[RMDB]
RNA sequence: GGGAACGACUCGAGUAGAGUCGAAAAUGGUGGGUGCCUGUAAUCCCAGCUACUCGGGAGGCUGAGGCAGGUGAAUCGCUUGAACCCAGGAGGCGGAGUUUGCAGUGAGCCGAGAUCUCACCACUGCGUAAUUACCCUGCUUCGGCAGGGUAAUUACAAAAGAAACAACAACAACAAC
Reactivity to DMS in 0.01 (KOAc 150mM, MgCl2 10mM, bicine 150mM(pH8.5), 24C), signal-to-noise 1, nucleotides 027 to 126: u010g000g010u010g010g010g020u010g010c020c000u000g010u000a110a170u020c010c000c020a060g010c020u000a110c080u010c100g000g020g000a100g020g010c010u000g020a060g010g010c010a020g000g000u010g000a050a060u000c080g000c030u000u000g000a050a150c030c010c010a100g040g010a120g000g020c030g010g000a050g010u010u010u020g020c000a020g010u010g030a210g030c050c000g010a110g000a100u000c060u000c030a150c070c060a070c020u010g000c150